RNA sequence: GGGAACGACUCGAGUAGAGUCGAAAACCGUAGGCGUUGGAGGCUGCGCGGAAUCGAUGAAAUUUCAUUCGAAAGAGUGAAAUGGAGAUUCCGAACUACGCAGUGAAGACGCCUAAACGGAAAGAUGCGUUUGACCGUUCGCGGUCAAACGCAUCAACACUACUCAAAACUUCGGUUUUGAGUAGUGAAAAGAAACAACAACAACAAC
Reactivity to 2A3 in 0.01 (KOAc 150mM, MgCl2 10mM, bicine 150mM(pH8.5), 24C), signal-to-noise 1, nucleotides 027 to 156: c000c000g000u010a010g000g000c020g030u000u020g060g020a050g220g150c010u010g000c010g030c020g000g000a000a000u000c020g190a270u010g020a010a020a010u020u010u010c000a010u020u000c000g030a120a010a020g000a010g020u000g000a000a000a000u020g010g000a000g000a000u000u000c000c000g000a010a000c000u070a030c010g020c000a000g000u020g080a000a020g010a000c010g070c010c000u000a000a000a000c010g000g030a270a030a040g000a000u000g000c020g000u010u000u030g030a020c040c040g080u130u220c300g030c050g150g000u000c010a000a000a000c020g000c000a000u000c000a000a000

Conditions: 150 mM KOAc, 10 mM MgCl2 and 150 mM bicine (pH 8.5), 24 C. Chemical mapping of a 207-nucleotide RNA with 2A3. Reactivities are given for positions 27 through 156. The 2A3 profile rests on 1,198 reads. For 2A3 the reverse transcriptase was SuperScript II with manganese.